[RMDB]
RNA sequence: GGGAACGACUCGAGUAGAGUCGAAAAGAUAUGGAUACAGGGAGCCACAUAGUCGGAAACGACUAUUGGCAUCGAUCUGUGAUCCUAAGUCAAAAGAUGCGAGCAAACUUCGGUUUGCUCGCAUCAAGUUUCGAACAACGUUCGCGUUGUUCGAAACAAAAGAAACAACAACAACAAC
Reactivity to DMS in 0.01 (KOAc 150mM, MgCl2 10mM, bicine 150mM(pH8.5), 24C), signal-to-noise 1, nucleotides 027 to 126: g020a060u010a300u010g000g000a010u010a020c000a020g000g010g010a040g000c000c010a010c300a010u000a030g010u000c000g000g000a090a140a190c000g020a010c000u000a000u000u000g000g020c000a160u000c220g040a030u000c010u010g000u000g000a010u000c000c000u000a050a060g000u000c020a150a050a130a140g000a020u000g010c000g040a040g010c000a000a000a020c000u000u010c210g010g000u000u000u000g000c000u000c010g030c000a000u000c000a030a030